[RMDB]
RNA sequence: GGGAACGACUCGAGUAGAGUCGAAAAGCUCCUUCAGGUGAACGAUCUCGGUUGUUUCUCUGAAGGCAUGAUCACCCCGUCCGAUCCGGAAGUUCGUGCUUCCGUCGAACGCGAAAGUCGGACGGCGAAAACGAGUUACCGUUCGCGGUAACUCGAAACUAUCGCAUCAGUUCGCUGAUGCGAUAGUAAAAGAAACAACAACAACAAC
Reactivity to DMS in 0.01 (KOAc 150mM, MgCl2 10mM, bicine 150mM(pH8.5), 24C), signal-to-noise 1, nucleotides 027 to 156: g050c080u000c020c010u000u010c020a040g020g020u000g010a020a020c030g010a030u000c000u010c220g030g000u020u000g020u000u000u000c020u000c020u000g000a100a010g000g000c110a020u000g010a160u020c040a070c010c010c020c000g010u010c000c000g010a050u000c090c010g000g000a110a050g020u000u010c160g040u000g010c090u000u000c060c030g030u000c030g000a080a080c080g000c040g020a170a110a090g000u000c000g030g000a040c020g000g040c020g010a050a040a130a200c040g010a030g000u000u010a000c000c000g010u000u010c280g000c020g050g000u000a000a000c000u000c000g000a010a060
Reactivity to 2A3 in 0.01 (KOAc 150mM, MgCl2 10mM, bicine 150mM(pH8.5), 24C), signal-to-noise 5, nucleotides 027 to 156: g020c030u020c020c000u000u000c010a050g100g020u120g090a000a000c010g010a030u000c030u100c240g150g010u020u020g010u010u150u040c020u000c000u000g000a000a000g010g000c020a110u110g020a030u070c070a140c030c040c000c000g010u020c010c000g010a110u040c020c010g010g030a020a020g040u110u300c130g120u300g070c070u060u010c020c000g030u070c070g040a080a050c080g030c030g170a100a050a000g040u010c000g000g010a000c000g000g000c030g010a090a100a010a050c010g000a000g000u000u000a000c000c000g000u010u080c300g020c000g100g000u020a000a000c000u000c000g000a010a000